Source information
An RNA of 177 nucleotides, treated with DMS and 2A3 and read out base by base. The reactions ran in a buffer of 150 mM KOAc, 10 mM MgCl2 and 150 mM bicine (pH 8.5), at 24 C. The DMS profile rests on 5,146 reads. Values are in units of 0.01, from 0 to 300, in steps of 10. 2A3 is a SHAPE reagent: it acylates the 2'-hydroxyl of flexible nucleotides of all four kinds. It was measured as part of the RMDB library M2PK50. 2A3 adducts were read by reverse transcription with SuperScript II with manganese. DMS adducts were read by reverse transcription with MarathonRT.
RNA sequence: GGGAACGACUCGAGUAGAGUCGAAAAGUUCGACCGUUCGCGGUCGAACAAAAUAAAACACUACAUAGCCUCGCGAAAGCGUUGUACUGAAAGGCUAAGAAAAAACGAUAUGGUUCGCCAUAUCGAACAUUCAUUAAUCCUUCGGGAUUAAUGAAUGAAAAGAAACAACAACAACAAC
Reactivity to DMS in 0.01 (KOAc 150mM, MgCl2 10mM, bicine 150mM(pH8.5), 24C), signal-to-noise 4, nucleotides 027 to 126: g000u000u000c010g030a010c010c010g030u000u020c200g020c010g050g000u000c010g000a010a010c000a030a030a040a040u000a080a070a110a060c110a120c130u000a060c100a170u010a040g010c010c000u000c010g000c010g000a100a070a140g010c020g020u010u000g010u010a170c140u000g000a050a050a040g010g010c010u010a050a120g030a000a060a050a050a070a110c020g010a010u000a010u010g000g010u000u010c190g020c000c000a000u000a000u000c000g010a070a090
Reactivity to 2A3 in 0.01 (KOAc 150mM, MgCl2 10mM, bicine 150mM(pH8.5), 24C), signal-to-noise 4, nucleotides 027 to 126: g000u010u010c000g000a000c020c010g010u040u020c300g000c010g030g000u000c000g010a000a000c000a000a010a010a000u050a000a030a020a000c090a030c060u210a030c050a170u090a010g000c000c010u020c010g010c000g040a060a030a020g010c020g070u060u130g110u160a120c090u120g080a150a040a020g000g000c010u030a050a020g180a020a110a010a010a000a000c010g000a000u000a000u010g040g010u030u040c170g040c070c000a010u000a010u010c010g000a020a000